[RMDB]
RNA sequence: GGGAACGACUCGAGUAGAGUCGAAAAUUGAACAUUGAUAACGCAGGUUCAAAAGAGAAAGUCAGAAAGAGCUUUUGUGAUGUUAAUGGGGAGUGUGUGACAGCACUUACACUUUUUCAGGUGACCCACUUGCAGAUACUUUCGAGUAUCUGCAAGUAAAAGAAACAACAACAACAAC
Reactivity to DMS in 0.01 (KOAc 150mM, MgCl2 10mM, bicine 150mM(pH8.5), 24C), signal-to-noise 4, nucleotides 027 to 126: u010u010g000a070a100c020a040u000u000g010a080u010a060a070c160g020c030a040g000g000u000u000c020a020a050a120a120g010a070g000a100a080a110g010u000c020a070g010a070a100a090g000a050g010c020u000u000u010u000g020u010g010a080u000g020u000u000a020a030u010g010g000g000g030a050g010u000g010u000g010u000g010a110c160a190g010c020a020c030u000u010a130c050a090c030u010u000u000u020u000c090a060g000g010u010g000a190c020c010c030
Reactivity to 2A3 in 0.01 (KOAc 150mM, MgCl2 10mM, bicine 150mM(pH8.5), 24C), signal-to-noise 3, nucleotides 027 to 126: u080u050g010a060a000c020a030u030u090g030a020u110a110a010c060g000c080a030g030g000u020u020c000a050a010a050a000g110a000g080a110a240a030g220u100c050a000g130a060a080a000g040a040g000c000u090u140u240u120g050u020g040a070u040g010u050u040a040a020u030g000g000g040g000a010g020u020g000u020g020u050g050a020c010a010g020c000a010c000u020u080a040c040a020c020u100u070u030u140u170c040a020g080g000u040g060a050c000c000c010
Conditions: 150 mM KOAc, 10 mM MgCl2 and 150 mM bicine (pH 8.5), 24 C. Structure probing data (DMS and 2A3) for a 177-nucleotide construct. Values are in units of 0.01, from 0 to 300, in steps of 10.